Structure probing data (2A3) for a 177-nucleotide construct. 2A3 is a SHAPE reagent: it acylates the 2'-hydroxyl of flexible nucleotides of all four kinds. Reactivities are given for positions 27 through 126. The 2A3 profile rests on 388 reads.

RNA sequence: GGGAACGACUCGAGUAGAGUCGAAAACCUUUCGGAGGGCAGAUAGAAAAUGAUGAUUGGAGCUUGCAUGAUCUGCUGAUUAUAGCAUUUCCGUGUAAUCAGGACCUGACAACAUCCUGAUUGCUUCGGACUGUCCUUGCUUCGGCAAGGACAGUCCAAAAGAAACAACAACAACAAC
Reactivity to 2A3 in 0.01 (KOAc 150mM, MgCl2 10mM, bicine 150mM(pH8.5), 24C), signal-to-noise 1, nucleotides 027 to 126: c000c000u000u100u150c070g000g000a050g010g010g000c110a000g040a100u180a040g280a000a180a040a030u150g150a010u080g060a060u180u300g040g010a000g000c000u000u000g000c000a000u150g000a060u090c000u000g000c000u110g020a020u000u070a060u170a070g010c000a000u000u100u120c060c010g000u000g070u040a000a020u000c000a000g000g000a000c020c020u060g080a070c000a050a000c000a050u000c000c000u000g000a000u000u000g020c030u060u090c000